[RMDB]
RNA sequence: GGGAACGACUCGAGUAGAGUCGAAAAACAGACGGUACGCCGUCAGAACGGUAGAAAAGAUGGUUUGAAAACCACGCCUUCUACCAAUAUAGUAAAUAAAUAGGCGGAGCGGUCAUACGUGACCGCAAAAACAUAUUCAGCUUCGGCUGAAUAUGAAGUAAUUAUGAAACUUCGGUUUCAUAAUUACAAAAGAAACAACAACAACAAC
Reactivity to DMS in 0.01 (KOAc 150mM, MgCl2 10mM, bicine 150mM(pH8.5), 24C), signal-to-noise 1, nucleotides 027 to 156: a070c040a140g000a100c050g000g000u000a030c170g050c020c010g040u000c040a060g010a100a080c170g000g000u000a030g010a020a000a000a010g010a080u000g020g000u010u010u030g020a200a090a160a070c010c010a020c030g000c020c000u000u000c010u000a010c000c010a070a090u000a160u010a140g000u010a080a060a090u000a100a030a150u000a080g010g020c000g030g000a250g020c000g000g010u000c000a140u000a090c190g000u000g000a100c000c020g000c020a000a030a000a080a070c010a030u000a000u010u000c000a000g010c020u000u000c300g070g000c000u000g010a000a000u000a000u000g020a090a140
Reactivity to 2A3 in 0.01 (KOAc 150mM, MgCl2 10mM, bicine 150mM(pH8.5), 24C), signal-to-noise 4, nucleotides 027 to 156: a010c020a000g000a000c000g000g020u050a040c190g020c040c000g000u000c000a000g060a070a020c070g000g000u010a010g030a020a000a000a020g090a300u020g000g050u020u060u180g130a150a120a000a010c000c000a000c000g000c000c000u010u000c000u010a010c010c000a010a000u120a010u030a020g080u050a010a050a150u100a040a130a080u220a040g000g010c000g010g010a000g010c000g000g000u010c010a010u040a130c140g080u030g000a000c000c000g000c000a000a000a000a000a020c000a000u000a000u000u000c000a000g000c020u020u140c190g140g000c000u000g000a000a000u000a000u000g000a040a000
Conditions: 150 mM KOAc, 10 mM MgCl2 and 150 mM bicine (pH 8.5), 24 C. Chemical mapping of a 207-nucleotide RNA with DMS and 2A3. DMS adducts were read by reverse transcription with MarathonRT. Source: RMDB library M2RFPK, as collected in RNAgym.